[RMDB]
RNA sequence: GGGAACGACUCGAGUAGAGUCGAAAAAACGAAUAUCCUGGCGGUAGUAGCAGCAUAGUCGGGUGAGAAUCCCGACCGCCGGAAGGGCAAGGGUUCCACGGCAAUGUUCGUCAGCCGUGGGUGAGUCGAAAAUAUAAUCUUUCGAGAUUAUAUUUUCAAAAGAAACAACAACAACAAC
Reactivity to 2A3 in 0.01 (KOAc 150mM, MgCl2 10mM, bicine 150mM(pH8.5), 24C), signal-to-noise 7, nucleotides 027 to 126: a000a000c100g020a080a020u080a050u080c010c020u070g040g000c020g020g020u070a060g020u070a030g180c080a030g010c030a120u050a070g050u030c000g000g000g000u010g000a030g010a000a010u010c010c000c000g000a000c000c000g000c000c020g030g030a050a040g030g010g000c070a040a050g030g000g000u090u010c000c010a010c000g010g000c060a060a040u060g020u070u100c100g080u090c090a140g230c030c000g010u000g020g000g000u030g010a020g090u140c100
Reactivity to DMS in 0.01 (KOAc 150mM, MgCl2 10mM, bicine 150mM(pH8.5), 24C), signal-to-noise 8, nucleotides 027 to 126: a070a040c070g010a060a050u010a080u000c020c010u020g010g010c020g010g010u010a080g020u010a090g010c100a090g020c070a080u020a090g010u000c000g000g000g000u000g000a190g000a300a120u010c000c010c000g000a040c000c050g020c020c010g000g010a050a050g000g000g020c080a070a090g000g010g010u010u020c010c010a010c000g000g010c000a070a080u010g010u010u010c060g000u010c110a210g000c000c000g010u000g000g000g010u020g000a090g000u010c120
The record gives the reactivity of an RNA of 177 nucleotides to 2A3 and DMS.
DMS adducts were read by reverse transcription with MarathonRT.
Values cover nucleotides 27 to 126.
Values are in units of 0.01, from 0 to 300, in steps of 10.
For 2A3 the reverse transcriptase was SuperScript II with manganese.